Background: Structure probing data (2A3 and DMS) for a 207-nucleotide construct. Reactivities are given for positions 27 through 156. The RNA was probed in 150 mM KOAc, 10 mM MgCl2 and 150 mM bicine (pH 8.5) at 24 C. DMS adducts were read by reverse transcription with MarathonRT. 2A3 adducts were read by reverse transcription with SuperScript II with manganese. For DMS, 1,763 sequencing reads were counted.

[RMDB]
RNA sequence: GGGAACGACUCGAGUAGAGUCGAAAAUGAAUUUGGGUGAUUGAGGGACCAAGAGCAGACCUGACUCUUAGACAGAGGGGAAAGGAAGGAGAUAGAUCACCAGACGAAGAUCAGUGGAAAGACUAAGAAAGAUCUCAAAUGAUAACAGAGGUUCCUCACCGUAUAGCUGAUUCGUCAGCUAUACGGUAAAAGAAACAACAACAACAAC
Reactivity to 2A3 in 0.01 (KOAc 150mM, MgCl2 10mM, bicine 150mM(pH8.5), 24C), signal-to-noise 3, nucleotides 027 to 156: u140g050a000a060u020u060u110g040g000g020u020g030a060u020u050g010a090g000g000g000a000c020c030a080a010g040a030g080c030a020g030a030c000c000u030g070a080c010u000c000u020u040a080g020a090c050a050g060a050g000g010g000g000a060a070a030g050g020a050a030g030g030a070g000a010u060a020g060a020u070c000a010c110c010a000g020a050c070g050a050a010g020a060u050c050a010g040u040g100g000a080a040a000g040a020c030u020a030a050g020a060a080a020g030a090u020c010u000c020a070a130a030u130g030a030u060a160a050c040a030g070a030g060g000u010u010c000c000u020c010
Reactivity to DMS in 0.01 (KOAc 150mM, MgCl2 10mM, bicine 150mM(pH8.5), 24C), signal-to-noise 2, nucleotides 027 to 156: u000g020a110a090u000u000u000g020g000g050u010g020a080u000u000g010a070g000g030g000a040c010c010a020a080g020a170g010c100a090g000a250c050c030u000g000a160c010u020c040u010u000a070g000a160c160a150g000a110g000g000g010g000a060a050a100g000g000a110a140g020g010a140g010a100u000a120g010a100u000c020a000c020c020a260g000a110c080g000a050a100g020a030u000c070a100g000u040g020g050a120a030a100g000a180c040u010a060a070g010a060a100a090g000a080u010c060u160c030a070a060a050u000g020a200u010a060a080c100a200g000a160g030g000u000u000c000c000u020c010